[RMDB]
RNA sequence: GGGAACGACUCGAGUAGAGUCGAAAAAGGACCCAAACUGGGAUUAGAUACCCCACUAUGCCUAGCCCUAAACCCAAAUAGUUACAUAACAAAACUAUUCGCCAGAGUACUACUCGCAACUGCCUAAAACUCAAAGGACUUGGCGGUGCUUCACAUCGUUUACCACAACGUUCGCGUUGUGGUAAACAAAAGAAACAACAACAACAAC
Reactivity to 2A3 in 0.01 (KOAc 150mM, MgCl2 10mM, bicine 150mM(pH8.5), 24C), signal-to-noise 2, nucleotides 027 to 156: a000g100g020a070c050c070c000a080a020a030c040u070g010g010g020a050u060u100a070g060a090u120a110c000c020c000c010a060c040u080a060u100g030c000c000u030a010g000c000c010c000u040a040a060a040c030c020c000a030a040a050u040a000g030u030u030a040c060a160u190a260a040c020a030a100a020a000c020u020a020u040u110c030g030c040c040a060g010a000g070u030a080c020u010a000c010u000c030g010c020a040a060c050u050g000c000c000u090a110a120a050a030c050u050c070a120a110a040g060g040a040c020u020u050g050g010c000g010g020u030g000c000u070u080c080a070c000a130u080c040

Conditions: 150 mM KOAc, 10 mM MgCl2 and 150 mM bicine (pH 8.5), 24 C. Structure probing data (2A3) for a 207-nucleotide construct. Reactivities are rounded to 0.1 and cut off at 0 and 3. Reactivities are given for positions 27 through 156.